[RMDB]
RNA sequence: GGGAACGACUCGAGUAGAGUCGAAAAGCACUCCGCCCACGGCGACCACUGGAGUGCCACCGGCUAGCGCAGCGGUCAGAAAGCCGAUCGCGAGGACGAUCCACAGCCAGCGAGGUACCGACGGCAGGUGCGUGAGCUGAUUCGUCAGCUCACGCACAAAAGAAACAACAACAACAAC
Reactivity to DMS in 0.01 (KOAc 150mM, MgCl2 10mM, bicine 150mM(pH8.5), 24C), signal-to-noise 1, nucleotides 027 to 126: g000c040a170c070u010c000c000g000c040c000c000a060c160g090g000c110g000a050c000c100a030c180u000g000g000a170g000u000g000c150c060a000c100c030g020g060c010u010a210g010c000g000c100a060g110c000g000g000u000c100a000g000a160a180a210g000c080c000g000a100u000c030g000c000g010a250g000g000a110c060g000a020u000c000c190a080c040a060g050c000c300a240g130c210g010a000g010g000u000a030c000c000g000a130c110g000g140c110a070g010
Reactivity to 2A3 in 0.01 (KOAc 150mM, MgCl2 10mM, bicine 150mM(pH8.5), 24C), signal-to-noise 2, nucleotides 027 to 126: g020c010a010c050u020c000c020g020c020c010c020a090c030g090g020c060g070a060c000c000a050c070u040g070g010a020g020u030g030c000c000a050c010c040g120g000c030u070a090g000c040g020c010a010g000c010g020g110u060c070a020g190a100a030a020g070c010c000g060a090u030c030g030c010g070a110g070g020a020c060g020a030u000c020c000a020c000a010g020c000c000a020g050c020g090a070g010g030u070a050c000c010g030a070c020g050g000c070a050g060
The record gives the reactivity of an RNA of 177 nucleotides to DMS and 2A3.
The data come from the RNA Mapping Database (RMDB), library OK1LIB.
The 2A3 profile rests on 1,137 reads.
The DMS profile rests on 812 reads.
The reactions ran in a buffer of 150 mM KOAc, 10 mM MgCl2 and 150 mM bicine (pH 8.5), at 24 C.